[RMDB]
RNA sequence: GGGAACGACUCGAGUAGAGUCGAAAAUUACGAUUGGUAGUAACAGUGUUAUUGGUUACAAUGUAACAAUUUUGACGCAUGAAGCAUUAGUUGAUGAAUUUCGUUAUGGACCAGUGACGAUAGGAUCGCGUGGUGUAUGAUUCGUCAUACACCACGCAAAAGAAACAACAACAACAAC
Reactivity to DMS in 0.01 (KOAc 150mM, MgCl2 10mM, bicine 150mM(pH8.5), 24C), signal-to-noise 1, nucleotides 027 to 126: u000u070a070c080g010a050u020u000g000g070u060a090g000u000a110a040c040a060g060u030g000u000u000a080u030u000g000g000u030u000a040c120a100a070u010g040u010a040a090c080a050a020u000u000u000u000g000a090c140g010c040a120u040g000a000a090g010c050a050u030u040a030g070u000u000g000a060u000g020a060a150u010u000u000c060g010u140u000a000u010g000g000a100c000c000a030g040u000g010a030c070g000a110u000a140g000g000a150u000c090
Reactivity to 2A3 in 0.01 (KOAc 150mM, MgCl2 10mM, bicine 150mM(pH8.5), 24C), signal-to-noise 2, nucleotides 027 to 126: u050u000a060c000g020a020u050u000g120g020u010a010g030u050a030a020c050a010g020u020g000u190u080a000u000u000g010g000u000u000a010c000a010a010u040g010u020a070a050c010a020a020u080u020u050u060g050a040c040g010c190a020u040g110a120a010g000c000a000u000u120a000g050u040u110g130a080u130g000a040a180u010u040u000c000g000u000u010a000u040g000g040a070c000c000a050g130u090g040a010c030g030a090u150a190g180g000a060u120c060